Structure probing data (DMS and 2A3) for a 207-nucleotide construct. For 2A3, 2,956 sequencing reads were counted.

[RMDB]
RNA sequence: GGGAACGACUCGAGUAGAGUCGAAAACGCUGGGAGGUCUGAUAAACCCCAUGUAGGGAGCAGGCUCUACUGAAGCGCGCACGGUAGAGCCUGCGAAGAACUACAUGAACUUUAUAGACCUCCUGUGCUGAAGCGCGCACGGCAACCGAAAGGUGCGGAAACAUUGAUUCUUCGGAAUCAAUGUUUCAAAAGAAACAACAACAACAAC
Reactivity to DMS in 0.01 (KOAc 150mM, MgCl2 10mM, bicine 150mM(pH8.5), 24C), signal-to-noise 1, nucleotides 027 to 156: c030g020c030u010g020g030g040a010g020g080u020c020u000g040a240u000a010a050a060c050c020c090c020a050u020g020u000a020g020g000g000a050g040c020a070g020g000c000u000c010u000a010c000u000g000a080a040g020c000g020c020g050c000a300c150g000g000u010a010g010a020g000c010c020u000g020c000g010a040a130g000a170a290c000u000a020c010a010u000g010a090a090c100u000u010u000a080u000a020g000a000c010c000u000c010c000u000g000u010g020c020u020g010a130a110g000c000g040c050g000c020a070c010g020g000c040a110a080c020c000g000a080a090a230g000g010u000g000c030g000
Reactivity to 2A3 in 0.01 (KOAc 150mM, MgCl2 10mM, bicine 150mM(pH8.5), 24C), signal-to-noise 2, nucleotides 027 to 156: c050g010c050u050g000g000g010a010g000g000u000c000u050g090a050u110a120a070a060c000c050c010c000a000u000g000u010a000g000g010g000a020g010c000a000g000g000c000u010c000u000a000c010u010g070a190a060g010c000g000c000g010c010a040c030g010g000u000a000g000a000g000c000c000u010g000c000g000a000a000g000a000a000c000u000a000c000a000u010g020a020a030c000u080u070u040a130u080a090g000a010c000c000u000c000c000u000g010u040g000c020u080g040a110a010g000c000g000c000g000c010a000c010g070g000c020a040a100c020c010g040a060a060a010g010g000u000g000c040g060
DMS adducts were read by reverse transcription with MarathonRT. The RNA was probed in 150 mM KOAc, 10 mM MgCl2 and 150 mM bicine (pH 8.5) at 24 C. For DMS, 2,435 sequencing reads were counted.